[RMDB]
RNA sequence: GGGAACGACUCGAGUAGAGUCGAAAAAUGCUUCCUCACAUGCAAUCUGCCACAUUCAGACGGUGUAUCAAUUUAUAUCUGACAACUGCAGUGAGAUUAGAGGCGCAGUUUUCAACACCGACAGAAAACUGAUAGCCUGAUUCGUCAGGCUAUCAGUAAAAGAAACAACAACAACAAC
Reactivity to 2A3 in 0.01 (KOAc 150mM, MgCl2 10mM, bicine 150mM(pH8.5), 24C), signal-to-noise 2, nucleotides 027 to 126: a000u090g000c020u040u010c020c000u030c000a030c000a050u090g040c010a010a090u000c030u040g040c030c020a030c030a140u140u100c000a030g030a050c020g060g050u020g030u070a090u150c050a030a000u010u170u100a220u060a030u040c060u030g010a040c030a030a050c070u020g000c010a050g020u030g050a040g040a110u110u220a050g030a040g030g030c000g030c030a020g000u020u010u060u060c020a030a000c030a020c010c010g070a030c020a060g190a000a110a010
Reactivity to DMS in 0.01 (KOAc 150mM, MgCl2 10mM, bicine 150mM(pH8.5), 24C), signal-to-noise 3, nucleotides 027 to 126: a090u000g000c060u000u010c020c000u000c080a070c130a100u000g010c070a040a110u010c060u010g000c050c160a060c150a090u000u000c070a060g010a150c090g010g010u020g040u020a120u000c160a050a060u000u010u010a060u010a040u010c040u000g000a060c090a030a060c090u000g000c000a080g000u000g000a150g000a110u010u000a090g000a090g000g010c300g010c030a050g000u000u000u000u010c040a070a110c070a110c040c030g020a130c160a110g000a080a050a110